[RMDB]
Description:
Chemical mapping of a 207-nucleotide RNA with DMS and 2A3. The data come from the RNA Mapping Database (RMDB), library OK3TST. Reactivities are rounded to 0.1 and cut off at 0 and 3.
RNA sequence: GGGAACGACUCGAGUAGAGUCGAAAAUGGUCUUGAUGGUUAUUGUGGUGUUUAUCUCUGGAGAUAAAUGCAUUCUGACACCAACAGUCAUAUAUCAGUAAGAAUGGCAAUGAAUUUGGGACGCCAAGGCAGGAGGAUUGCUUGAGCCCAGGAGUUCACGGACAUGUGUAUUCGUACACAUGUCCGUAAAAGAAACAACAACAACAAC
Reactivity to DMS in 0.01 (KOAc 150mM, MgCl2 10mM, bicine 150mM(pH8.5), 24C), signal-to-noise 1, nucleotides 027 to 156: u010g010g010u010c040u000u020g010a040u030g050g060u000u010a100u000u000g030u000g010g030u000g050u000u010u000a000u030c030u010c060u020g030g000a100g040a060u000a000a030a010u000g000c000a150u010u000c030u000g000a070c060a070c040c050a090a100c040a120g000u000c080a010u000a150u010a100u010c050a110g000u000a100a140g020a040a070u010g020g040c040a100a130u000g000a100a130u010u000u000g000g080g000a090c050g000c030c030a020a110g020g000c000a020g000g030a080g030g000a120u010u010g010c050u000u010g020a160g030c030c030c040a180g010g010a040g000u020u000c020
Reactivity to 2A3 in 0.01 (KOAc 150mM, MgCl2 10mM, bicine 150mM(pH8.5), 24C), signal-to-noise 2, nucleotides 027 to 156: u040g020g040u040c050u060u080g050a050u080g040g000u190u070a130u150u130g050u060g090g050u030g050u020u080u010a000u010c050u000c080u140g190g090a040g000a040u050a060a030a000u060g020c030a020u070u040c020u020g010a000c000a010c050c000a020a090c010a030g040u010c020a000u050a010u020a000u150c060a020g090u100a040a020g000a090a040u030g050g030c050a030a080u070g110a040a040u090u060u010g010g020g020a030c040g000c050c050a020a020g010g010c040a030g000g030a020g000g020a010u050u030g020c010u040u050g010a020g030c010c000c020a070g030g020a070g030u070u080c060